[RMDB]
RNA sequence: GGGAACGACUCGAGUAGAGUCGAAAAGAAAGAAAGAAACUGCCCUCAAGGAGCUUACAAUCUAGCUGGGGGUGAACGGCUUGCACAUGAACGCAACUAGACUGUGAGCUUCUAGAGGGCAGGGAAACCUACGCAUUGACUUCGGUCAAUGCGUAGGAAAAGAAACAACAACAACAAC
Reactivity to 2A3 in 0.01 (KOAc 150mM, MgCl2 10mM, bicine 150mM(pH8.5), 24C), signal-to-noise 2, nucleotides 027 to 126: g160a000a040a010g100a030a070a010g080a000a030a000c000u000g000c000c000c010u000c000a000a040g000g000a000g030c010u010u000a000c000a010a010u000c000u000a010g000c020u040g030g000g010g080g090u060g010a060a030c080g200g050c130u070u260g010c110a050c010a070u150g180a220a010c070g020c100a010a010c000u010a000g010a000c000u000g000u000g000a000g000c000u000u000c000u000a000g000a000g000g000g000c000a000g000g010g010a010a040a000
Reactivity to DMS in 0.01 (KOAc 150mM, MgCl2 10mM, bicine 150mM(pH8.5), 24C), signal-to-noise 1, nucleotides 027 to 126: g040a180a050a080g000a050a030a240g000a100a220a250c000u010g000c000c000c000u000c000a150a040g000g000a000g000c000u000u000a000c000a000a060u030c010u000a030g070c060u020g000g000g040g000g020u010g000a050a170c140g000g000c110u000u060g000c020a070c090a100u010g010a160a160c010g000c000a000a040c000u030a000g040a000c000u060g000u000g020a000g000c000u000u000c000u000a040g000a010g050g000g040c000a000g010g000g070a040a150a100